[RMDB]
RNA sequence: GGGAACGACUCGAGUAGAGUCGAAAAGCUCUUUAAUGGGAUGGGAUCCGAAGCCCCAUUGAGGGAUAAUACAGGCUCUCCCAUCCAACUCCUAUUCCAACACGUCCUCGUCGUACAGAGUGGUAACUAAGGUAUAGCUCCUUCGGGAGCUAUACAAGGGUAUUUAUAAGUUCGCUUAUAAAUACCCAAAAGAAACAACAACAACAAC
Reactivity to 2A3 in 0.01 (KOAc 150mM, MgCl2 10mM, bicine 150mM(pH8.5), 24C), signal-to-noise 3, nucleotides 027 to 156: g000c010u020c010u060u130u120a170a130u260g060g000g010a000u010g020g000g010a040u180c010c020g040a070a060g010c020c020c040c020a130u110u160g070a300g020g000g000a040u100a200a040u130a170c090a040g020g010c010u000c010u000c000c000c000a000u000c000c000a000a010c020u040c000c020u020a060u060u050c030c020a040a020c030a040c080g030u020c000c010u030c030g050u020c020g010u060a050c040a020g040a030g030u040g070g000u080a090a050c050u030a150a040g060g000u000a000u000a000g000c000u010c010c010u000u010c030g150g010g000a000g040c000u000a000u000a000c000a000a010
Reactivity to DMS in 0.01 (KOAc 150mM, MgCl2 10mM, bicine 150mM(pH8.5), 24C), signal-to-noise 2, nucleotides 027 to 156: g020c040u000c020u010u000u020a090a050u000g020g000g000a050u000g000g010g000a030u000c040c000g010a150a290g000c020c000c010c010a300u000u000g030a170g020g020g000a080u000a080a130u010a190c090a300g010g000c030u000c050u000c010c010c000a050u000c030c020a040a020c020u000c030c040u000a120u000u000c020c030a070a100c070a110c040g020u000c030c030u000c050g000u010c050g030u000a100c050a090g020a110g000u000g020g000u000a030a100c060u000a060a100g030g010u000a000u000a010g000c010u010c000c000u000u010c300g070g000g040a010g010c010u000a000u000a010c000a040a120

An RNA of 207 nucleotides, treated with 2A3 and DMS and read out base by base. The 2A3 profile rests on 1,979 reads.